[RMDB]
Chemical mapping of a 177-nucleotide RNA with 2A3 and DMS.
For 2A3, 6,601 sequencing reads were counted.
Source: RMDB library TTRDES, as collected in RNAgym.
The reactions ran in a buffer of 150 mM KOAc, 10 mM MgCl2 and 150 mM bicine (pH 8.5), at 24 C.
For DMS, 3,522 sequencing reads were counted.
As a SHAPE reagent, 2A3 marks flexible, mostly unpaired nucleotides at the ribose 2'-OH.
RNA sequence: GGGAACGACUCGAGUAGAGUCGAAAAGAUAUGGAAUCCUAGGGAGACGUUAUAUCGGAAACGAUAUACGUCGACGAUCUAGAGAUUCCUAAGUCAAAAUCGAAAACCUGGUUCGCCAGGUUUUCGAGUCAACUCUAUACUUCGGUAUAGAGUUGACAAAAGAAACAACAACAACAAC
Reactivity to 2A3 in 0.01 (KOAc 150mM, MgCl2 10mM, bicine 150mM(pH8.5), 24C), signal-to-noise 2, nucleotides 027 to 126: g000a010u010a000u080g010g010a010a010u000c000c000u020a010g010g000g020a050g010a000c000g080u300u100a000u000a010u010c010g000g000a000a010a010c010g000a000u000a000u010a010c000g010u000c010g000a010c000g000a000u000c010u020a020g020a050g000a180u020u000c010c010u010a010a010g010u000c020a070a020a030a300u060c010g000a000a000a000a000c000c000u000g000g080u070u100c300g040c040c000a000g000g050u000u000u000u000c000g000a000
Reactivity to DMS in 0.01 (KOAc 150mM, MgCl2 10mM, bicine 150mM(pH8.5), 24C), signal-to-noise 2, nucleotides 027 to 126: g010a020u000a050u010g010g010a020a010u000c000c000u000a000g010g000g010a010g010a000c000g000u010u010a010u000a000u000c000g030g000a020a020a050c000g000a010u000a010u000a000c030g020u000c000g020a100c290g020a050u010c000u000a000g010a250g010a000u000u000c000c000u010a000a080g000u000c020a100a110a130a270u000c000g000a010a010a020a010c000c000u000g000g020u000u000c270g020c010c000a000g010g000u000u000u000u000c000g000a030